[RMDB]
An RNA of 177 nucleotides, treated with DMS and 2A3 and read out base by base. Values cover nucleotides 27 to 126. The RNA was probed in 150 mM KOAc, 10 mM MgCl2 and 150 mM bicine (pH 8.5) at 24 C. For 2A3, 1,172 sequencing reads were counted. DMS (dimethyl sulfate) methylates the pairing face of unpaired adenines and cytosines. For DMS the reverse transcriptase was MarathonRT. Source: RMDB library OK1LIB, as collected in RNAgym.

RNA sequence: GGGAACGACUCGAGUAGAGUCGAAAAAUGAUGAGGGAUUAUCAGCCUCUGAAGCAUCAGAUGUGGACUUGAAUCCAAGUGAUGAUGCUUGGGAGACAGAUCCAAGCGCUCCACCUCAGAUGGAUGGGCUACGAAGGUUCUUCGGAACCUUCGUAGCAAAAGAAACAACAACAACAAC
Reactivity to DMS in 0.01 (KOAc 150mM, MgCl2 10mM, bicine 150mM(pH8.5), 24C), signal-to-noise 2, nucleotides 027 to 126: a060u060g000a070u020g010a070g010g020g000a130u000u050a050u000c140a130g040c000c010u000c000u000g000a180a020g000c000a020u000c000a000g010a100u050g020u000g010g000a000c080u010u030g010a180a200u000c050c020a010a010g000u010g010a170u000g000a030u000g040c000u000u020g000g020g000a080g000a110c200a170g000a090u010c130c030a010a050g000c030g000c070u010c010c040a140c040c000u010c030a160g000a030u020g010g020a090u010g000g000
Reactivity to 2A3 in 0.01 (KOAc 150mM, MgCl2 10mM, bicine 150mM(pH8.5), 24C), signal-to-noise 2, nucleotides 027 to 126: a000u200g020a080u100g020a030g160g000g010a040u080u170a100u300c070a040g030c000c000u000c000u000g050a020a000g020c000a010u000c000a000g030a080u050g010u050g010g040a030c030u120u160g070a120a090u020c040c000a010a010g040u030g210a120u020g000a000u070g000c000u010u000g110g000g010a050g000a020c030a010g070a050u020c040c000a010a020g080c070g000c010u010c000c010a000c000c000u010c010a030g030a120u110g060g000a050u030g030g140